Conditions: 150 mM KOAc, 10 mM MgCl2 and 150 mM bicine (pH 8.5), 24 C. Structure probing data (DMS and 2A3) for a 177-nucleotide construct.
RNA sequence: GGGAACGACUCGAGUAGAGUCGAAAAGAUAUGGACCCACUGAGCUUUUGACGGCGUGUCGGAAACGACACCUCGAUAAGCUCUGUGGGUCCUAAGUCAAAGAACGUUAGCUUCGGCUAACGUUCAAGGUAUUAUUGUAGUUCGCUACAAUAAUACCAAAAGAAACAACAACAACAAC
Reactivity to DMS in 0.01 (KOAc 150mM, MgCl2 10mM, bicine 150mM(pH8.5), 24C), signal-to-noise 9, nucleotides 027 to 126: g000a030u000a300u000g010g000a010c000c000c000a010c000u000g010a020g020c000u010u000u010u010g010a300c300g000g010c300g010u000g010u000c000g010g000a070a070a130c000g010a010c000a000c010c000u000c000g000a160u000a010a030g010c000u000c000u000g010u000g000g000g010u000c000c000u000a010a060g010u000c030a090a100a150g000a010a010c000g010u000u000a000g010c000u000u010c220g030g000c000u000a000a000c000g010u000u000c000a030a040
Reactivity to 2A3 in 0.01 (KOAc 150mM, MgCl2 10mM, bicine 150mM(pH8.5), 24C), signal-to-noise 9, nucleotides 027 to 126: g020a010u040a030u100g000g000a000c010c000c000a000c010u030g000a000g010c020u120u260u300u300g070a030c010g010g030c080g010u000g000u000c010g010g010a040a030a030c000g000a000c000a000c000c000u010c000g050a060u050a300a040g000c010u000c000u000g000u000g000g000g000u000c000c000u000a000a000g000u000c000a000a010a050g000a000a000c000g000u000u000a000g000c010u050u060c300g120g000c000u010a000a000c000g000u000u000c000a000a000
Description
2A3 is a SHAPE reagent: it acylates the 2'-hydroxyl of flexible nucleotides of all four kinds. For DMS the reverse transcriptase was MarathonRT. The 2A3 profile rests on 55,134 reads.